This 177-nucleotide RNA was probed chemically with DMS. The data come from the RNA Mapping Database (RMDB), library OK2TRN. The DMS profile rests on 1,493 reads. Conditions: 150 mM KOAc, 10 mM MgCl2 and 150 mM bicine (pH 8.5), 24 C.
RNA sequence: GGGAACGACUCGAGUAGAGUCGAAAACGCCACAGCCAUGAACAGCGAUCCAACAGUGGGGUCCUCCACCAAGGUACCGGAGGGUGUGGCGGGCGCGCCCAAUGAGGCUGCACUGUUGGCACUGAUAUGACAUGGGAAUUUUCGAAUUCCCAUGUCAAAAAGAAACAACAACAACAAC
Reactivity to DMS in 0.01 (KOAc 150mM, MgCl2 10mM, bicine 150mM(pH8.5), 24C), signal-to-noise 2, nucleotides 027 to 126: c070g000c020c030a040c040a080g010c040c090a070u000g030a100a150c080a080g050c020g000a120u010c040c000a020a010c080a050g020u000g010g010g010g010u010c020c010u010c020c170a090c060c110a050a080g010g000u010a080c100c080g000g020a150g000g000g000u010g020u000g000g020c040g020g000g000c070g000c100g000c000c000c010a110a050u020g010a100g000g000c010u000g030c020a040c010u000g000u000u010g000g000c160a020c030u000g010a150u000a110